[RMDB]
RNA sequence: GGGAACGACUCGAGUAGAGUCGAAAACGUAAUCCUCUGCAUUCCCUUCACGGCCACCGAUUACAUGGUGUACUACUGGCCAUAUGGAAGGUUCUGGUGCCGCAGUGUCCAGUACCUGAUUGUGGUACAGCGUACGUACGUUCGCGUACGUACGCUGAAAAGAAACAACAACAACAAC
Reactivity to 2A3 in 0.01 (KOAc 150mM, MgCl2 10mM, bicine 150mM(pH8.5), 24C), signal-to-noise 1, nucleotides 027 to 126: c010g030u040a050a070u050c020c010u060c120u120g010c020a090u050u000c000c100c000u080u070c130a080c060g030g040c000c000a020c010c040g080a070u050u150a070c060a150u240g010g000u060g010u050a030c010u000a020c020u000g090g000c050c010a000u010a030u050g130g030a030a000g000g000u010u000c000u000g100g030u190g010c060c020g290c150a060g000u090g000u200c000c000a010g000u020a000c000c000u010g050a070u000u060g020u020g010g020u020a140
Reactivity to DMS in 0.01 (KOAc 150mM, MgCl2 10mM, bicine 150mM(pH8.5), 24C), signal-to-noise 2, nucleotides 027 to 126: c140g020u010a090a080u000c030c030u000c070u000g010c060a100u000u010c000c010c010u000u020c110a120c170g000g000c090c020a080c030c030g010a110u010u010a100c210a120u000g000g020u000g020u030a060c050u010a100c060u000g010g010c020c010a080u000a060u000g010g010a120a020g000g000u000u010c030u000g040g030u010g020c000c060g000c170a050g030u020g030u030c000c000a010g000u000a040c000c010u010g000a200u010u010g040u000g000g000u000a060